[RMDB]
RNA sequence: GGGAACGACUCGAGUAGAGUCGAAAACCUCUACGAGGAGGAGAUGCGGGAGCUGCGCCGGCAGGUGGACCAGCUCACCAACGACAAGGCCCGCGUCGAGGUGGAGCGCGACAACCUGGCCGAGGACCACAUUUUACCCGUUCGCGGGUAAAAUGUGAAAAGAAACAACAACAACAAC
Reactivity to DMS in 0.01 (KOAc 150mM, MgCl2 10mM, bicine 150mM(pH8.5), 24C), signal-to-noise 4, nucleotides 027 to 126: c040c000u000c050u000a060c170g010a120g010g000a070g000g010a070g000a050u000g010c060g000g000g010a050g000c080u000g010c120g000c060c020g000g010c090a040g010g010u000g020g000a150c160c080a220g030c040u000c000a030c000c020a020a150c060g000a030c040a080a100g000g000c010c020c010g020c130g050u010c000g000a220g000g020u010g000g010a040g000c040g000c140g000a080c060a060a080c030c020u000g000g040c000c000g000a110g020g000a190c070
Reactivity to 2A3 in 0.01 (KOAc 150mM, MgCl2 10mM, bicine 150mM(pH8.5), 24C), signal-to-noise 5, nucleotides 027 to 126: c000c010u030c030u040a070c070g080a030g070g010a020g030g030a090g010a040u080g010c030g000g000g030a050g010c030u040g000c050g050c030c000g060g020c040a030g000g040u050g030g050a140c040c060a020g000c010u010c000a030c010c010a050a160c020g040a020c020a060a060g090g030c010c030c010g020c040g010u030c010g020a030g040g000u030g030g060a020g010c030g000c030g020a030c040a080a090c000c010u020g070g000c020c000g000a050g020g030a010c000
The data come from the RNA Mapping Database (RMDB), library OK1LIB. The record gives the reactivity of an RNA of 177 nucleotides to DMS and 2A3. 2A3 adducts were read by reverse transcription with SuperScript II with manganese. DMS adducts were read by reverse transcription with MarathonRT. The RNA was probed in 150 mM KOAc, 10 mM MgCl2 and 150 mM bicine (pH 8.5) at 24 C.